[RMDB]
An RNA of 177 nucleotides, treated with DMS and 2A3 and read out base by base. High 2A3 reactivity points to a flexible backbone, as in loops and unpaired stretches. For 2A3, 2,006 sequencing reads were counted. Values cover nucleotides 27 to 126. The RNA was probed in 150 mM KOAc, 10 mM MgCl2 and 150 mM bicine (pH 8.5) at 24 C. The DMS profile rests on 1,875 reads.
RNA sequence: GGGAACGACUCGAGUAGAGUCGAAAAAGUAGCUGUGCAGCGCGCUCGGACACUGGAAACCUGGCGUUCAUACGCGCCUUUAUUAACGCAUCUACACUCGGAUAGCGCUUUGGCGUUUUCGGCACAGGCAUUCGGAGAGAUUCGUCUCUCCGAAUGCAAAAGAAACAACAACAACAAC
Reactivity to DMS in 0.01 (KOAc 150mM, MgCl2 10mM, bicine 150mM(pH8.5), 24C), signal-to-noise 3, nucleotides 027 to 126: a100g000u000a040g020c040u000g010u000g040c090a110g030c070g040c010g030c020u000c210g010g010a040c060a070c080u010g000g000a080a100a140c210c020u020g000g000c020g020u000u000c110a140u000a120c180g010c010g000c000c080u010u000u000a090u020u000a030a160c060g000c040a050u000c010u000a090c070a090c090u010c060g020g000a020u000a060g020c040g000c030u000u000u010g000g000c040g010u010u000u000u000c050g000g010c030a060c110a050g000
Reactivity to 2A3 in 0.01 (KOAc 150mM, MgCl2 10mM, bicine 150mM(pH8.5), 24C), signal-to-noise 2, nucleotides 027 to 126: a010g110u100a020g050c020u020g000u010g020c010a040g030c020g000c000g000c020u030c060g000g020a080c040a040c100u130g090g020a100a090a070c000c020u000g020g000c000g040u050u070c020a060u070a140c030g000c010g020c030c030u100u180u060a200u120u100a060a020c020g010c000a020u000c030u080a050c090a020c100u070c040g050g020a070u070a100g060c010g010c050u100u030u130g030g000c040g010u000u000u100u060c040g020g000c030a000c000a060g110